Structure probing data (DMS and 2A3) for a 177-nucleotide construct. For DMS, 1,369 sequencing reads were counted. For 2A3, 1,569 sequencing reads were counted. The reactions ran in a buffer of 150 mM KOAc, 10 mM MgCl2 and 150 mM bicine (pH 8.5), at 24 C.
[RMDB]
RNA sequence: GGGAACGACUCGAGUAGAGUCGAAAAUCACAUCAGAAGGAAAAGAGAUCAAGAACAAGGACGAGAUCUUAGCCCUACUAAAGGCUCUCUUCUUGCCCAAAAGACUUAGCAUAAUUCAUUGCCCGGGCUGAAACUGAUAGUUCGCUAUCAGUUUCAGAAAAGAAACAACAACAACAAC
Reactivity to DMS in 0.01 (KOAc 150mM, MgCl2 10mM, bicine 150mM(pH8.5), 24C), signal-to-noise 2, nucleotides 027 to 126: u010c090a120c120a090u010c130a070g000a130a090g000g020a040a060a130a140g000a050g000a050u000c040a060a170g000a050a090c110a040a090g030g010a060c070g010a140g000a030u010c020u000u000a100g020c010c010c050u000a060c250u030a070a080a120g000g000c000u020c050u000c020u000u010c000u000u000g020c000c000c040a010a070a110a050g000a080c090u010u010a050g020c030a070u010a040a090u000u000c050a050u000u000g000c000c040c010g040g000g040
Reactivity to 2A3 in 0.01 (KOAc 150mM, MgCl2 10mM, bicine 150mM(pH8.5), 24C), signal-to-noise 2, nucleotides 027 to 126: u040c000a010c030a050u070c040a040g090a130a040g060g030a050a050a130a050g040a010g000a030u030c020a030a060g040a080a140c050a170a050g110g020a050c040g020a030g000a060u020c000u030u030a020g040c000c000c000u140a230c050u090a060a160a020g010g000c000u010c020u020c020u110u000c000u040u040g010c000c000c000a020a160a070a020g040a020c040u050u060a020g030c030a030u080a130a150u300u110c040a030u060u120g020c000c030c010g060g110g000